This 177-nucleotide RNA was probed chemically with DMS and 2A3. The RNA was probed in 150 mM KOAc, 10 mM MgCl2 and 150 mM bicine (pH 8.5) at 24 C. DMS adducts were read by reverse transcription with MarathonRT. For 2A3, 1,112 sequencing reads were counted.
[RMDB]
RNA sequence: GGGAACGACUCGAGUAGAGUCGAAAAUUUGAUGAAGGGGAUAAUGACUUAUGAAAACGACUAAAUCCGUCAUUACAAUUUUAUUACUCUAAAAGGACUUUGAACACUGUAGCAAAUUACAGUAGUUAUGGUGCUAUUAGUUCGCUAAUAGCACCAUAAAAGAAACAACAACAACAAC
Reactivity to DMS in 0.01 (KOAc 150mM, MgCl2 10mM, bicine 150mM(pH8.5), 24C), signal-to-noise 2, nucleotides 027 to 126: u000u020u010g000a020u020g020a030a040g000g020g010g010a130u010a060a100u010g040a140c240u010u030a100u030g000a160a040a090a100c190g010a180c150u010a060a120a120u000c020c020g020u000c000a000u000u000a050c260a010a000u000u000u040u010a000u010u020a160c020u020c030u000a090a030a050a050g040g000a100c110u000u010u000g000a100a080c060a030c010u010g040u000a000g000c190a080a110a100u050u020a050c000a010g000u000a100g000u000u000
Reactivity to 2A3 in 0.01 (KOAc 150mM, MgCl2 10mM, bicine 150mM(pH8.5), 24C), signal-to-noise 2, nucleotides 027 to 126: u050u030u100g010a030u000g000a060a040g300g020g040g060a010u050a050a060u080g080a130c140u170u060a060u090g150a170a080a040a000c080g010a080c030u100a040a080a040u000c010c000g020u020c000a000u020u020a030c060a020a000u000u080u000u000a080u000u030a080c030u040c010u010a060a120a000a010g060g000a010c040u150u060u140g050a020a000c020a010c010u020g000u000a000g100c100a110a030a080u240u000a050c000a000g000u050a000g000u010u070